[RMDB]
RNA sequence: GGGAACGACUCGAGUAGAGUCGAAAACGUGCGUACUGGGCCGCCGGCACAAUGUUCCACCCAGCCGUCUCAGAGGACGCGGUUCGACAACGAUCAGCCAGCCGGUCAGCGGGGUCCUCCUAGCUAGCGCUACUAAAUGAUUCGUCAUUUAGUAGCGAAAAGAAACAACAACAACAAC
Reactivity to DMS in 0.01 (KOAc 150mM, MgCl2 10mM, bicine 150mM(pH8.5), 24C), signal-to-noise 5, nucleotides 027 to 126: c110g000u010g010c030g010u010a080c060u000g000g000g010c100c080g010c050c030g010g000c050a070c080a080a070u000g000u000u000c050c040a130c070c020c040a100g010c080c020g010u000c070u000c070a130g010a090g020g020a050c060g010c040g000g010u000u000c100g020a070c100a070a080c120g000a080u000c060a080g000c030c030a100g000c020c030g010g010u000c060a090g000c050g010g010g000g000u000c020c030u000c020c040u010a070g010c110u010a090g010
Reactivity to 2A3 in 0.01 (KOAc 150mM, MgCl2 10mM, bicine 150mM(pH8.5), 24C), signal-to-noise 3, nucleotides 027 to 126: c030g040u050g020c010g030u050a080c040u070g000g020g020c010c020g020c030c020g040g020c030a030c000a060a140u130g010u060u030c010c000a050c030c030c000a010g030c020c010g060u020c020u010c070a100g040a080g070g030a010c020g000c040g070g000u050u080c060g010a020c050a260a060c080g040a100u090c010a010g060c040c010a000g030c030c000g020g030u080c040a010g050c020g010g010g020g000u020c000c030u040c010c010u050a060g030c030u040a030g070